This 207-nucleotide RNA was probed chemically with DMS. Source: RMDB library RNAMAK, as collected in RNAgym. The RNA was probed in 150 mM KOAc, 10 mM MgCl2 and 150 mM bicine (pH 8.5) at 24 C. For DMS, 2,071 sequencing reads were counted.
[RMDB]
RNA sequence: GGGAACGACUCGAGUAGAGUCGAAAACGAAAGUUCGCUUUCGAUGGCGGGGUCGAUCCAAUGACGGGCACCAAGCGAAGAACCUGAAGCCUCCACGGGGGAGCUUGUGCCUAAGACAGGAUCGACGGAGGCACCCUCUAGGUCACUUCGGUGACAAGAGCUAGUUAUCUUUCGAGAUAACUAGCUCAAAAGAAACAACAACAACAAC
Reactivity to DMS in 0.01 (KOAc 150mM, MgCl2 10mM, bicine 150mM(pH8.5), 24C), signal-to-noise 1, nucleotides 027 to 156: c020g040a040a130a160g000u010u000c120g000c010u010u000u000c000g010a070u010g030g000c010g010g030g030g070u000c000g000a030u000c010c000a140a180u010g030a120c120g000g000g000c020a040c220c090a030a030g000c070g000a230a150g020a090a300c000c010u000g000a090a160g010c020c000u000c010c010a300c060g010g020g000g000g010a050g020c040u020u000g000u010g000c000c000u010a030a200g000a200c020a110g000g000a010u000c030g000a010c020g010g010a060g010g040c030a080c040c000c020u000c070u000a150g050g000u010c010a020c030u000u000c300g040g010u010g000a090c030a040a070